[RMDB]
RNA sequence: GGGAACGACUCGAGUAGAGUCGAAAAGGUUACACAGCAGGCAUUCUCCGCCGGUGCGCCCGCGCCCCCGGCCGUGUUUCAGCACGGUGGCCAUCAGAGGGCCCAGGUCGAGGUCGGGCUGGGCAUCGGGUUCGGUAAACUGCGCAAAGCGCGGAGCAUUUCAAGAUAUUUUCGAAUAUCUUGAAAUAAAAGAAACAACAACAACAAC
Reactivity to 2A3 in 0.01 (KOAc 150mM, MgCl2 10mM, bicine 150mM(pH8.5), 24C), signal-to-noise 3, nucleotides 027 to 156: g080g000u080u130a040c090a010c030a040g090c040a020g060g020c040a080u130u060c030u010c030c020g000c000c010g030g210u010g000c020g020c000c010c000g010c020g020c020c000c010c010c000g030g000c000c000g030u020g040u050u260u270c080a050g020c010a000c000g000g000u040g020g030c040c010a140u150c050a050g040a160g160g040g000c000c010c000a070g080g090u000c010g030a060g080g150u260c020g010g020g000c000u010g010g020g000c000a040u060c050g010g000g000u050u060c010g000g000u060a140a130a090c070u070g000c000g000c010a030a020a040g090c110g000c010g030g010a010g000c020
Reactivity to DMS in 0.01 (KOAc 150mM, MgCl2 10mM, bicine 150mM(pH8.5), 24C), signal-to-noise 2, nucleotides 027 to 156: g010g010u000u000a070c050a100c060a120g010c020a090g020g030c020a090u000u010c020u010c020c030g020c010c020g000g030u000g010c030g000c010c030c000g020c110g000c020c000c010c010c030g020g080c000c000g040u010g000u000u000u030c180a220g030c000a040c010g010g010u000g000g010c000c020a100u020c090a170g000a200g000g000g000c000c000c010a070g010g020u050c020g010a210g010g010u000c050g030g000g000c010u000g010g010g020c010a050u000c040g010g020g010u000u000c030g020g010u000a060a100a100c050u010g010c000g020c000a060a130a120g000c070g020c010g010g000a090g000c140